[RMDB]
RNA sequence: GGGAACGACUCGAGUAGAGUCGAAAACCAUAUUUGGCCCCAAUGCUGCCUGUGGUUCAGCAACAAGAUCAGCAUCCACUUUCCUCAGCUAUCGGGUCUGCUUCUUCAAACCAUUCAUCGCAGGCGACCAUACGAAUACGUUCGCGUAUUCGUAUGGAAAAGAAACAACAACAACAAC
Reactivity to DMS in 0.01 (KOAc 150mM, MgCl2 10mM, bicine 150mM(pH8.5), 24C), signal-to-noise 4, nucleotides 027 to 126: c020c000a110u020a110u000u010u010g020g020c030c010c020c070a110a110u000g000c060u000g020c060c010u020g020u000g010g010u000u000c100a060g010c070a060a110c160a080a060g010a060u000c050a050g020c050a050u010c020c040a120c080u000u000u010c030c060u000c100a060g010c070u000a070u010c070g000g000g010u000c020u000g020c070u010u000c020u010u000c090a050a070a130c080c030a110u010u000c090a040u000c030g020c040a050g010g010c050g010a160
Reactivity to 2A3 in 0.01 (KOAc 150mM, MgCl2 10mM, bicine 150mM(pH8.5), 24C), signal-to-noise 4, nucleotides 027 to 126: c020c010a040u070a150u210u120u120g080g020c030c000c000c010a030a080u130g030c030u060g020c030c010u060g030u040g030g030u080u080c050a060g020c010a010a050c040a070a050g040a100u080c030a020g020c020a010u000c010c010a030c000u070u060u060c010c040u060c010a020g010c000u040a070u200c020g010g020g010u020c020u020g020c020u020u050c000u070u060c050a070a080a070c020c010a050u080u100c050a050u070c050g010c040a000g050g000c030g030a020
Source: RMDB library OK2TRN, as collected in RNAgym. The record gives the reactivity of an RNA of 177 nucleotides to DMS and 2A3. Values are in units of 0.01, from 0 to 300, in steps of 10. The DMS profile rests on 3,769 reads. For 2A3, 6,702 sequencing reads were counted.